[RMDB]
RNA sequence: GGGAACGACUCGAGUAGAGUCGAAAACAUGGUGGUCCCAGCUACUCGUGAGGCUAAGGUAGGAGAAUCGCUUGGACUCAGGAGGUGAAGGUUGCAGUGAGCUGAGAUCACACCACUGCUCUCCAGCCUGGGUGACAGAGUAAGACUCUGUCCCAAAGUACUAUCCAGCGUUCGCGCUGGAUAGUACAAAAGAAACAACAACAACAAC
Reactivity to 2A3 in 0.01 (KOAc 150mM, MgCl2 10mM, bicine 150mM(pH8.5), 24C), signal-to-noise 2, nucleotides 027 to 156: c100a090u140g030g030u020g000g040u050c010c000c020a010g020c000u130a070c000u010c010g300u010g040a030g040g000c030u000a020a020g050g020u070a090g020g270a080g010a050a130u120c100g000c130u020u020g000g000a000c000u000c000a050g070g000a000g000g060u100g030a080a100g000g110u240u120g000c050a020g020u040g170a050g020c070u050g030a050g050a110u080c040a040c000a000c120c040a020c030u030g000c030u050c030u000c020c010a100g000c010c040u070g000g010g030u080g010a000c010a050g020a000g000u050a150a050g030a080c000u000c020u050g020u000c000c000c000a030a060a000